[RMDB]
RNA sequence: GGGAACGACUCGAGUAGAGUCGAAAAGAUAUGGAACCUACCCACCUCUUAAGUUCGUUGAAAUCGGAAACGAUGGAGAACUAUAGAGAGGGUUCCUAAGUCAAAGGAAUCACUUCGGUGAUUCCAACUAGAUCGAUAUCUUCGGAUAUCGAUCUAGAAAAGAAACAACAACAACAAC
Reactivity to 2A3 in 0.01 (KOAc 150mM, MgCl2 10mM, bicine 150mM(pH8.5), 24C), signal-to-noise 2, nucleotides 027 to 126: g030a100u200a110u240g000g000a010a000c010c010u080a220c060c000c010a050c000c000u020c010u050u020a100a040g000u010u000c020g160u290u040g020a020a030a000u020c030g000g060a120a060a000c000g000a000u030g020g000a020g000a040a000c010u020a050u070a060g020a000g010a030g000g010g000u010u020c000c000u000a140a000g160u160c110a160a020a110g010g000a000a000u010c000a010c040u100u230c300g130g000u000g000a000u020u040c000c000a000a010
Reactivity to DMS in 0.01 (KOAc 150mM, MgCl2 10mM, bicine 150mM(pH8.5), 24C), signal-to-noise 2, nucleotides 027 to 126: g000a080u020a130u020g000g000a010a000c000c000u000a110c010c010c030a300c150c000u020c000u000u000a290a050g000u000u010c000g000u000u010g000a120a090a040u000c000g010g000a100a040a120c020g000a020u000g010g010a100g000a010a000c020u000a120u010a000g010a020g000a110g000g000g000u000u000c000c020u010a050a140g040u010c130a050a120a090g010g000a020a010u000c000a020c000u000u030c190g010g000u000g000a030u000u010c000c000a010a080
Annotation: An RNA of 177 nucleotides, treated with 2A3 and DMS and read out base by base. DMS adducts were read by reverse transcription with MarathonRT. The RNA was probed in 150 mM KOAc, 10 mM MgCl2 and 150 mM bicine (pH 8.5) at 24 C. Source: RMDB library TTRDEL, as collected in RNAgym.